[RMDB]
RNA sequence: GGGAACGACUCGAGUAGAGUCGAAAAUACGCGAGGUUCGCCUCGCGUAAAAGACGAGCGUAAACGUGAGCGUACGUAGUGCUGUACAUCGUUCCUACACGAAUGCACAUGGUUUCGACCAUGUGAAGUUACACCUAUACUUCGGUAUAGGUGUAACAAAAGAAACAACAACAACAAC
Reactivity to DMS in 0.01 (KOAc 150mM, MgCl2 10mM, bicine 150mM(pH8.5), 24C), signal-to-noise 8, nucleotides 027 to 126: u000a000c010g010c000g010a020g010g020u000u010c220g020c000c000u000c000g000c000g020u000a010a020a090a230g010a090c050g000a090g010c030g010u000a030a070a050c040g000u010g010a150g030c300g010u010a020c030g010u000a110g010u000g010c030u000g010u010a110c230a180u000c020g000u000u000c000c010u000a090c210a100c200g000a090a070u010g000c000a010c000a010u000g000g010u000u000u010c180g010a010c000c010a000u000g000u000g000a030a060
Reactivity to 2A3 in 0.01 (KOAc 150mM, MgCl2 10mM, bicine 150mM(pH8.5), 24C), signal-to-noise 9, nucleotides 027 to 126: u030a000c000g000c000g000a000g000g030u050u090c160g080c050c000u000c000g000c000g000u000a000a000a000a010g020a010c040g010a030g040c030g060u120a070a130a070c040g040u070g120a090g140c060g030u070a010c010g010u030a040g120u050g100c050u040g030u060a020c000a050u010c010g000u000u000c000c000u030a030c060a010c070g200a170a070u300g010c000a000c000a000u000g000g020u030u080u130c210g090a020c000c000a000u000g000u000g010a010a000
Background
Conditions: 150 mM KOAc, 10 mM MgCl2 and 150 mM bicine (pH 8.5), 24 C. An RNA of 177 nucleotides, treated with DMS and 2A3 and read out base by base. Values cover nucleotides 27 to 126. The DMS profile rests on 14,017 reads. For 2A3 the reverse transcriptase was SuperScript II with manganese. Source: RMDB library M2PK50, as collected in RNAgym.